This 177-nucleotide RNA was probed chemically with DMS and 2A3. For DMS, 17,292 sequencing reads were counted. Values are in units of 0.01, from 0 to 300, in steps of 10. Conditions: 150 mM KOAc, 10 mM MgCl2 and 150 mM bicine (pH 8.5), 24 C. 2A3 adducts were read by reverse transcription with SuperScript II with manganese. It was measured as part of the RMDB library OK2TRN. The 2A3 profile rests on 35,543 reads.
RNA sequence: GGGAACGACUCGAGUAGAGUCGAAAAGGAGUGCUACCGAAAGGUAGCACUCCAACAAAUCGGUGUAAGUAUAGCCCGUCUUACACCGUGCGGCACAGCGGAAACGCUGAUGUCGUAUACACGGCUAGUAUAAAUGGUGAUUCGUCACCAUUUAUACAAAAGAAACAACAACAACAAC
Reactivity to DMS in 0.01 (KOAc 150mM, MgCl2 10mM, bicine 150mM(pH8.5), 24C), signal-to-noise 7, nucleotides 027 to 126: g010g010a030g030u000g000c000u000a010c000c000g000a120a110a180g000g020u000a000g000c010a000c000u000c000c010a030a050c070a040a030a040u010c010g010g010u000g000u000a000a010g000u000a140u000a040g000c080c020c050g010u010c000u000u000a000c000a000c000c000g010u000g000c000g010g010c000a020c000a010g010c000g010g000a130a100a170c010g020c000u000g000a050u000g020u000c000g020u000a040u010a100c220a050c060g000g000c020u000a050
Reactivity to 2A3 in 0.01 (KOAc 150mM, MgCl2 10mM, bicine 150mM(pH8.5), 24C), signal-to-noise 4, nucleotides 027 to 126: g000g000a000g000u010g000c000u000a000c010c000g050a080a070a080g000g010u000a000g000c000a000c000u000c000c000a000a000c000a000a000a000u060c000g000g000u000g000u000a010a010g010u020a020u030a200g030c030c030c010g010u020c000u000u000a000c000a000c000c000g000u000g000c000g000g000c000a000c000a010g010c010g010g030a070a060a020c020g000c000u000g000a040u000g000u000c000g000u000a000u040a010c130a020c020g030g000c030u020a040